[RMDB]
RNA sequence: GGGAACGACUCGAGUAGAGUCGAAAAAAGUAUACCUGAGGAGAUUAUGGAAGAGGUAGGCGAAUAUAUCGAUAUCUUCAUUCAACUAACUGAAAUUGCUGAGAUGGAAAGAGACGUUAUCGUGGAGCACAGGGUCAAGCUUCGGCUUGACCCUGUGAAAAGAAACAACAACAACAAC
Reactivity to DMS in 0.01 (KOAc 150mM, MgCl2 10mM, bicine 150mM(pH8.5), 24C), signal-to-noise 1, nucleotides 027 to 126: a080a060g000u100a040u000a060c030c040u000g000a230g050g000a020g000a000u000u000a090u040g000g000a030a000g050a100g000g010u000a030g000g000c020g020a050a210u060a060u060a080u010c000g010a100u000a150u000c010u000u000c020a020u000u000c070a040a160c070u000a070a110c050u000g040a030a020a050u000u030g010c050u000g000a000g040a010u010g000g000a040a050a020g000a060g000a110c120g000u000u040a050u050c000g090u010g000g000a040g000
Reactivity to 2A3 in 0.01 (KOAc 150mM, MgCl2 10mM, bicine 150mM(pH8.5), 24C), signal-to-noise 2, nucleotides 027 to 126: a000a040g080u090a020u010a020c000c000u030g030a020g020g020a020g000a020u070u130a030u260g090g000a120a060g000a040g150g000u210a080g200g000c000g010a190a000u220a030u000a020u110c060g000a000u000a020u030c000u090u040c000a050u000u010c030a030a060c020u110a050a000c000u060g060a070a070a070u170u160g000c060u020g000a000g000a150u000g060g150a220a060a020g150a080g000a050c080g010u020u020a070u230c030g000u010g000g020a000g040
Structure probing data (DMS and 2A3) for a 177-nucleotide construct. DMS adducts were read by reverse transcription with MarathonRT. The reactions ran in a buffer of 150 mM KOAc, 10 mM MgCl2 and 150 mM bicine (pH 8.5), at 24 C.